Chemical mapping of a 177-nucleotide RNA with 2A3 and DMS. Conditions: 150 mM KOAc, 10 mM MgCl2 and 150 mM bicine (pH 8.5), 24 C. 2A3 adducts were read by reverse transcription with SuperScript II with manganese. Reactivities are rounded to 0.1 and cut off at 0 and 3. DMS adducts were read by reverse transcription with MarathonRT.

[RMDB]
RNA sequence: GGGAACGACUCGAGUAGAGUCGAAAAGAUAUGGAGAUUCGCUAGCUGGCAUCGGAAACGAUGUCAUCAGCUUGGACCGGUCUCCUAAGUCAAAAGGAGAGUUACCCGUUCGCGGGUAACUCUCCAACGUUAUUCAUCAGUUCGCUGAUGAAUAACGAAAAGAAACAACAACAACAAC
Reactivity to 2A3 in 0.01 (KOAc 150mM, MgCl2 10mM, bicine 150mM(pH8.5), 24C), signal-to-noise 2, nucleotides 027 to 126: g000a020u080a050u210g040g000a010g010a040u300u300c060g000c030u020a030g000c010u000g020g040c000a010u010c000g020g000a040a050a030c000g000a010u000g050u040c010a030u050c010a000g010c000u050u070g050g020a170c090c170g030g000u000c000u000c000c000u010a120a040g070u030c030a060a000a070a120g010g000a000g000a010g000u000u000a010c000c020c010g030u070u100c300g000c010g130g000g000u000a000a000c000u010c010u000c000c000a000a000
Reactivity to DMS in 0.01 (KOAc 150mM, MgCl2 10mM, bicine 150mM(pH8.5), 24C), signal-to-noise 4, nucleotides 027 to 126: g000a050u000a300u000g010g000a010g000a010u000u030c030g020c030u000a020g020c020u010g000g000c010a000u000c010g020g000a120a060a190c010g000a010u010g010u000c170a050u000c140a030g010c010u000u010g020g010a110c290c060g010g010u000c010u000c000c000u000a060a100g010u000c040a070a060a120a090g010g010a020g000a030g000u000u010a010c000c000c000g010u010u010c240g030c010g000g000g000u000a000a010c000u000c000u000c000c000a000a020